[RMDB]
RNA sequence: GGGAACGACUCGAGUAGAGUCGAAAAUGGCGGACAUGCUGGGAGUGUUCCUCCUGGCUCAUUGAGUAGACCAGGACCUCUCUGCCAUGGCAAAUCACAAACAACCCUAGGAUGUCUUUUAGGAUGAAGUGAACAAUGUUGUUCCCUUCGUCAGAGAUCCACUCAUCCAUUUCGAUGGAUGAGUGGAAAAAGAAACAACAACAACAAC
Reactivity to 2A3 in 0.01 (KOAc 150mM, MgCl2 10mM, bicine 150mM(pH8.5), 24C), signal-to-noise 2, nucleotides 027 to 156: u120g110g050c150g060g060a070c010a000u030g010c010u010g000g060g000a030g030u210g000u170u130c080c010u010c040c010u010g000g040c020u020c040a190u260u300g110a060g020u200a060g100a120c010c000a000g020g000a030c020c010u000c000u030c000u020g100c110c000a000u020g010g000c070a010a020a080u100c040a090c060a090a110a010c020a040a100c030c000c000u010a040g010g080a150u110g040u100c090u000u110u020u120a000g110g000a000u040g000a000a010g000u000g010a010a000c050a150a200u300g040u260u030g000u030u300c040c000c020u020u010c000g000u000c010a010g020a000g000a060